[RMDB]
RNA sequence: GGGAACGACUCGAGUAGAGUCGAAAAGCGUGGUGACGUGGCCCGCGCCCGGCUGCUUCAGGACCUGGCCGAGGCGCAGAACGUGCGGGACCGCGUGCGGCUGGCCGAGGCUCGCUGGCAGCGCGAGGUGUCCCUGAAAGUUCGCUUUCAGGGACACAAAAGAAACAACAACAACAAC
Reactivity to 2A3 in 0.01 (KOAc 150mM, MgCl2 10mM, bicine 150mM(pH8.5), 24C), signal-to-noise 1, nucleotides 027 to 126: g010c030g020u110g010g080u130g110a090c070g000u040g090g000c020c010c020g000c000g030c010c010c030g030g000c030u030g000c000u090u210c060a160g060g090a160c000c110u090g060g020c000c010g060a080g030g010c050g000c010a010g010a100a040c030g010u050g030c000g000g040g050a100c060c130g030c000g030u010g000c010g000g070c030u010g010g030c020c010g000a030g060g000c030u030c080g020c000u020g040g040c010a040g000c020g000c010g020a060g060
Reactivity to DMS in 0.01 (KOAc 150mM, MgCl2 10mM, bicine 150mM(pH8.5), 24C), signal-to-noise 2, nucleotides 027 to 126: g030c020g000u060g020g020u010g000a060c070g030u000g000g020c060c040c040g000c040g000c010c040c000g020g020c000u010g020c050u000u020c050a130g030g000a150c070c050u020g010g020c020c020g000a170g020g020c000g050c010a070g020a070a090c110g030u010g010c060g000g000g010a110c090c020g000c020g030u000g030c040g020g000c020u010g000g020c040c020g010a160g010g030c060u000c150g000c030u000g010g010c040a060g000c040g030c020g010a090g010
Conditions: 150 mM KOAc, 10 mM MgCl2 and 150 mM bicine (pH 8.5), 24 C. An RNA of 177 nucleotides, treated with 2A3 and DMS and read out base by base. It was measured as part of the RMDB library OK2TRN. DMS adducts were read by reverse transcription with MarathonRT. For DMS, 2,000 sequencing reads were counted.